[RMDB]
RNA sequence: GGGAACGACUCGAGUAGAGUCGAAAACACAGCACAAAGAUAGCCAGAAACGCACAGAAAAAGAAAUCGACAAACCGAAGAAAUCGGCUGGCUAACAUUGUCGAACAAAUUCUGUAAAGUGCUGAAACGUACGUACCAGCUUCGGCUGGUACGUACGAAAAGAAACAACAACAACAAC
Reactivity to 2A3 in 0.01 (KOAc 150mM, MgCl2 10mM, bicine 150mM(pH8.5), 24C), signal-to-noise 2, nucleotides 027 to 126: c070a000c040a000g040c010a000c000a000a130a030g110a120u130a070g060c010c000a070g080a030a090a020c020g070c050a020c000a050g180a070a140a000a000a000g160a040a060a040u030c000g020a000c000a020a100a000c010c010g000a080a040g100a120a180a070u050c000g020g000c000u000g100g000c000u000a040a000c010a010u030u030g040u010c000g010a000a000c030a000a010a060u010u000c000u000g040u050a230a040a000g000u000g010c000u000g050a030a050a010
Reactivity to DMS in 0.01 (KOAc 150mM, MgCl2 10mM, bicine 150mM(pH8.5), 24C), signal-to-noise 1, nucleotides 027 to 126: c060a250c000a030g000c000a070c000a190a140a010g000a200u110a040g050c010c000a150g000a050a200a080c190g060c170a010c000a000g000a000a130a080a050a040g000a040a060a040u000c000g080a000c000a000a030a130c030c000g030a130a160g000a080a230a000u000c000g000g030c030u000g000g000c080u060a060a050c110a000u000u000g000u000c000g000a000a050c170a010a090a100u000u000c000u010g020u000a130a020a090g040u000g000c000u000g000a000a060a130
The record gives the reactivity of an RNA of 177 nucleotides to 2A3 and DMS. The reactions ran in a buffer of 150 mM KOAc, 10 mM MgCl2 and 150 mM bicine (pH 8.5), at 24 C.